[RMDB]
RNA sequence: GGGAACGACUCGAGUAGAGUCGAAAAUUUAGAGGGAAGACCUCUUAUUGGAGCCACACUCCCAUGUAUGAUUGAGCAAUUCAAAGUGUUUUGGCUGAAACCCUACGAACAAUGUCCGCAGUGUUCAAAUGCAAAGCAACCAGGUGGGAAACCAUUCGUGUCAGUGGCAGUCAAGAAACAUAUUGUUAGUGCAUGGCCGAACGCAUCCCGAAUAAGCUGGACUAUCGGGGAUGGAAUCCCAUACAUUGGAUCAAGGACAGAAGAUAAUAUCCGAUUUCGAUCGGAUAAAAAGAAACAACAACAACAAC
Reactivity to DMS in 0.01 (KOAc 150mM, MgCl2 10mM, bicine 150mM(pH8.5), 24C), signal-to-noise 2, nucleotides 027 to 266: u040u070u010a000g030a020g000g000g000a200a150g010a290c000c000u000c000u000u000a020u010u000g010g040a110g030c030c050a100c110a070c070u000c060c090c040a080u010g020u020a050u000g030a120u020u020g000a090g030c180a080a060u050u000c030a060a130a100g030u010g000u000u000u030u000g000g080c000u000g010a100a160a120c050c060c040u000a110c120g010a030a040c100a080a150u000g000u000c010c010g030c070a100g030u020g010u000u010c080a090a120a060u000g000c070a040a050a110g020c070a090a070c120c130a020g030g040u000g020g000g030a040a030a300c030c000a170u000u000c040g000u010g000u010c060a040g020u020g010g020c000a040g000u000c030a040a110g000a080a080a080c160a110u010a090u000u020g020u000u000a140g010u000g000c000a100u010g000g020c010c000g010a050a050c090g000c150a080u020c000c000c020g000a070a040u020a020a090g000c070u000g010g020a060c040u020a040u010c030g000g000g000g000a050u000g010g000a010a290u010c000c020c000a000u010a010c100a100u010u030g000g010a100u000c090a120a110g010g000a000c070a030g000a050a090g000a120u000a050a090